[RMDB]
RNA sequence: GGGAACGACUCGAGUAGAGUCGAAAAGCCGGCGUAACCGGCAAUCCAUUUCGCGAUCUGUUUAACCAUCGGUGUGAUAGCGACAUUGCCGAGCGGCAUCAGCUCGGGCACCAAGAUCAUGCGCUCGACUACGUCGCUGCUUCGGCAGCGACGUAGUAAAAGAAACAACAACAACAAC
Reactivity to 2A3 in 0.01 (KOAc 150mM, MgCl2 10mM, bicine 150mM(pH8.5), 24C), signal-to-noise 1, nucleotides 027 to 126: g000c030c000g000g000c270g140u200a100a130c000c000g000g000c020a040a000u000c000c000a000u080u200u110c090g000c000g050a050u030c030u030g110u060u030u300a140a090c040c020a110u140c000g030g040u000g000u030g050a050u070a090g000c000g090a090c090a100u080u160g040c000c010g040a000g000c000g110g000c000a190u270c030a130g000c040u000c000g020g060g000c000a000c000c030a060a040g030a070u130c030a000u080g040c120g060c060u000c020g040

Structure probing data (2A3) for a 177-nucleotide construct.
The 2A3 profile rests on 426 reads.
Source: RMDB library OK1LIB, as collected in RNAgym.
Reactivities are given for positions 27 through 126.